[RMDB]
Structure probing data (DMS and 2A3) for a 177-nucleotide construct. For DMS, 953 sequencing reads were counted. 2A3 adducts were read by reverse transcription with SuperScript II with manganese.
RNA sequence: GGGAACGACUCGAGUAGAGUCGAAAAACUCACUACCAUCCAGCAGUACUCCAAGACAUUUUAUGUGCUGCCGCUUCGUGGCAAGCUUUCCUUUUGGGAAGCUGGUACGACUAAGGCUGGCUACCCAACGUGUCUGUCUUUUCGAAGACAGACACGUAAAAGAAACAACAACAACAAC
Reactivity to DMS in 0.01 (KOAc 150mM, MgCl2 10mM, bicine 150mM(pH8.5), 24C), signal-to-noise 1, nucleotides 027 to 126: a080c100u000c040a120c010u000a100c040c030a010u000c040c040a080g000c030a070g010u000a020c070u010c130c090a120a050g000a040c100a000u000u010u000u000a040u010g000u000g010c040u010g000c000c050g040c150u000u000c040g020u020g030g040c040a040a030g010c000u000u000u000c000c000u000u000u010u010g020g000g040a030a000g030c000u000g010g000u000a030c020g020a000c300u010a090a100g010g010c000u000g040g000c040u000a170c000c010c020a080
Reactivity to 2A3 in 0.01 (KOAc 150mM, MgCl2 10mM, bicine 150mM(pH8.5), 24C), signal-to-noise 1, nucleotides 027 to 126: a000c060u040c040a060c030u060a060c000c010a070u010c020c000a020g000c030a000g000u030a040c020u040c020c050a090a050g050a150c040a110u110u150u030u120a070u200g060u020g000c030u000g000c000c000g020c030u070u040c040g000u000g070g120c050a100a050g000c000u020u030u060c010c000u210u190u220u200g040g010g010a000a010g030c020u000g000g050u030a050c000g070a030c000u100a220a000g050g050c030u030g020g000c000u040a080c000c020c000a030